[RMDB]
RNA sequence: GGGAACGACUCGAGUAGAGUCGAAAAUCGACCUCAAGUUUCUUGAUCUUCUUCUUUGUCUUCCGGAGCUCCGCCUCGAGUUCCUCCGCUUUCUUUCUUCCACUCACCCACUUCUCGAGAAUAUCUUGUCGGCUACUGUUCGCAGUAGCCAAAAGAAACAACAACAACAAC
Reactivity to 2A3 in 0.01 (KOAc 150mM, MgCl2 10mM, bicine 150mM(pH8.5), 24C), signal-to-noise 6, nucleotides 027 to 129: u080c000g040a010c010c010u050c050a030a060g020u010u050u020c000u020u060g060a080u020c030u070u010c000u070u010c000u030u090u060g070u010c010u050u000c030c010g030g010a050g020c020u010c030c010g090c010c010u030c010g000a020g010u050u020c000c000u010c020c010g040c010u060u090u010c010u010u050u000c000u040u000c000c000a030c010u020c010a080c010c010c010a030c040u040u020c020u010c020g050a060g030a090a060u120a090u110c060u040u020g120u110c040
Reactivity to DMS in 0.01 (KOAc 150mM, MgCl2 10mM, bicine 150mM(pH8.5), 24C), signal-to-noise 6, nucleotides 027 to 129: u050c130g050a060c040c090u040c100a070a080g030u000u010u000c020u020u000g040a030u000c000u010u030c030u010u020c070u070u020u060g010u040c070u040u030c070c080g030g020a000g020c050u010c030c060g030c100c020u000c050g010a120g010u040u020c000c000u000c110c070g010c040u010u030u010c020u030u040u000c080u030u030c020c030a090c100u030c030a160c070c020c000a040c060u000u000c050u020c000g000a150g010a130a100u000a080u000c040u030u030g050u030c150